[RMDB]
Conditions: 150 mM KOAc, 10 mM MgCl2 and 150 mM bicine (pH 8.5), 24 C.
Chemical mapping of a 207-nucleotide RNA with 2A3 and DMS.
Values cover nucleotides 27 to 156.
For 2A3 the reverse transcriptase was SuperScript II with manganese.

RNA sequence: GGGAACGACUCGAGUAGAGUCGAAAAUAAGCAACAGACAACCACCUUUCCCGCUGACAAUAGCGUUAUCCCUCUGCACUUCGGUAAUAUGAGGGCACAGUAAAUCCCGCAAGGAUGAGAAUGUGAUUAAACAGUUACAGCUUCGGCUGUAACUGAACUUGAUCAAUCGGUUCGCCGAUUGAUCAAGAAAAGAAACAACAACAACAAC
Reactivity to 2A3 in 0.01 (KOAc 150mM, MgCl2 10mM, bicine 150mM(pH8.5), 24C), signal-to-noise 3, nucleotides 027 to 156: u180a020a010g090c040a000a110c000a080g130a040c030a040a050c020c040a060c030c010u000u070u050c020c000c000g000c070u070g020a010c130a100a140u090a140g020c010g050u100u110a100u120c000c000c000u010c010u020g010c040a020c040u030u030c190g070g010u050a000a010u080a050u280g010a000g000g000g000c000a000c000a000g000u030a020a020a020u010c030c000c030g120c080a020a050g000g010a030u020g000a020g000a030a010u040g010u020g010a020u120u190a130a130a020c000a000g000u000u000a000c000a000g000c000u010u100c190g130g000c000u010g000u000a000a000c000u000g000a000a020
Reactivity to DMS in 0.01 (KOAc 150mM, MgCl2 10mM, bicine 150mM(pH8.5), 24C), signal-to-noise 2, nucleotides 027 to 156: u000a100a140g010c020a070a080c120a080g010a110c010a140a100c000c050a120c050c010u000u010u010c000c000c030g020c070u010g020a180c100a060a130u010a080g010c010g040u010u000a130u010c000c000c000u010c020u000g030c050a090c040u010u040c170g010g040u010a020a110u000a090u030g000a100g000g020g020c050a000c070a040g000u000a110a130a140u000c030c020c010g000c160a070a160g000g030a100u010g000a070g000a120a080u000g000u020g010a100u000u000a030a090a130c000a040g040u000u000a020c000a030g010c010u000u000c300g050g060c000u000g010u040a000a000c000u000g020a000a080